[RMDB]
RNA sequence: GGGAACGACUCGAGUAGAGUCGAAAAGCUGUUAAUCUCUGAUGCAUUUCUCACCCUCCCAAUAAUGAAAAGUAGCUAUAAAGAUUGGACAGUGUUUUCUUGUGGAACAAAAGAAGUGAAUCAACCAGACUUAUGGUCAUUUCGAUGACCAUAAGUCAAAAGAAACAACAACAACAAC
Reactivity to DMS in 0.01 (KOAc 150mM, MgCl2 10mM, bicine 150mM(pH8.5), 24C), signal-to-noise 2, nucleotides 027 to 126: g000c010u010g020u000u020a070a060u000c000u000c030u000g000a140u000g000c020a060u020u000u000c020u010c050a210c070c030c040u010c040c020c020a090a140u020a110a140u010g000a030a030a040a060g010u000a080g020c050u000a110u010a080a130a000g000a040u000u000g000g020a020c040a060g010u020g030u010u010u000u000c010u010u010g020u000g010g010a050a060c060a060a060a110a020g010a010a070g030u010g000a080a040u010c070a080a100c130c070a160

Conditions: 150 mM KOAc, 10 mM MgCl2 and 150 mM bicine (pH 8.5), 24 C. The record gives the reactivity of an RNA of 177 nucleotides to DMS.